[RMDB]
RNA sequence: GGGAACGACUCGAGUAGAGUCGAAAAAGCAUCUAAGCGGGAAGCCUGUUCCAAGAUGAGGUUUCUCACCCCCUCGAGGGGGUAAGGCCCCCGGCAGACCACCGGGUUGAUAGGCCAGAACUGGAAGGUGCAUAAUUUGUUUCGACAAAUUAUGCACAAAAGAAACAACAACAACAAC
Reactivity to 2A3 in 0.01 (KOAc 150mM, MgCl2 10mM, bicine 150mM(pH8.5), 24C), signal-to-noise 1, nucleotides 027 to 126: a010g060c030a030u040c030u090a140a050g080c080g050g000g000a020a000g030c000c020u060g120u120u020c030c050a050a000g070a100u210g090a080g010g030u000u010u030c000u000c000a010c000c000c020c010c000u170c130g060a300g010g000g000g000g000u040a050a050g000g000c000c000c000c000c030g030g000c060a040g050a100c040c000a000c000c000g030g000g000u020u050g100a120u160a040g000g000c010c010a030g050a040a080c040u020g030g040a030a040g130
Reactivity to DMS in 0.01 (KOAc 150mM, MgCl2 10mM, bicine 150mM(pH8.5), 24C), signal-to-noise 3, nucleotides 027 to 126: a140g010c080a060u020c050u030a080a070g000c090g020g010g010a020a050g000c020c010u010g000u010u030c090c100a130a110g000a100u020g000a050g010g000u000u000u000c000u020c020a110c020c010c010c020c000u010c280g010a160g000g010g000g020g000u000a020a030g000g000c010c000c010c000c010g000g000c040a120g000a200c210c090a250c040c000g000g000g000u000u010g010a100u000a080g010g000c010c000a040g010a090a060c070u000g000g040a060a090g000